Structure probing data (DMS and 2A3) for a 177-nucleotide construct.
Source: RMDB library OK1LIB, as collected in RNAgym.
Conditions: 150 mM KOAc, 10 mM MgCl2 and 150 mM bicine (pH 8.5), 24 C.
For 2A3, 118,764 sequencing reads were counted.

RNA sequence: GGGAACGACUCGAGUAGAGUCGAAAACGAUAUGCAUUGAUCGCAUGUACUCUAUUAAUGCGUAUUAGUAUGCUCGUAGAACGCUAUAUUGUCAUGAAAAUGACAAUAGUACAUGCGACGAGCAUAAGGUAGUUGUUGAUUUCGAUCGACGACUACCAAAAGAAACAACAACAACAAC
Reactivity to DMS in 0.01 (KOAc 150mM, MgCl2 10mM, bicine 150mM(pH8.5), 24C), signal-to-noise 8, nucleotides 027 to 126: c050g000a130u020a020u010g000c040a090u020u010g000a090u000c010g000c020a020u010g000u000a020c030u010c100u010a040u010u020a070a070u030g010c000g020u000a040u020u020a090g020u010a020u010g010c010u010c110g020u000a050g010a030a090c180g010c080u020a090u010a020u000u000g000u000c000a000u000g000a080a050a120a010u000g000a010c010a000a000u000a020g010u000a010c030a010u000g000c000g000a010c000g010a020g000c000a000u000a040a110
Reactivity to 2A3 in 0.01 (KOAc 150mM, MgCl2 10mM, bicine 150mM(pH8.5), 24C), signal-to-noise 9, nucleotides 027 to 126: c020g020a040u020a020u080g070c110a100u010u070g060a100u070c010g000c020a010u040g010u040a030c020u030c030u070a050u070u100a130a030u100g000c010g000u020a040u040u020a040g080u020a030u080g030c020u010c040g020u010a020g020a100a010c020g000c020u000a000u000a000u050u010g010u000c000a000u030g130a110a120a080a040u020g000a000c000a000a000u010a010g020u030a010c030a040u040g000c000g000a000c000g000a000g000c000a000u000a010a010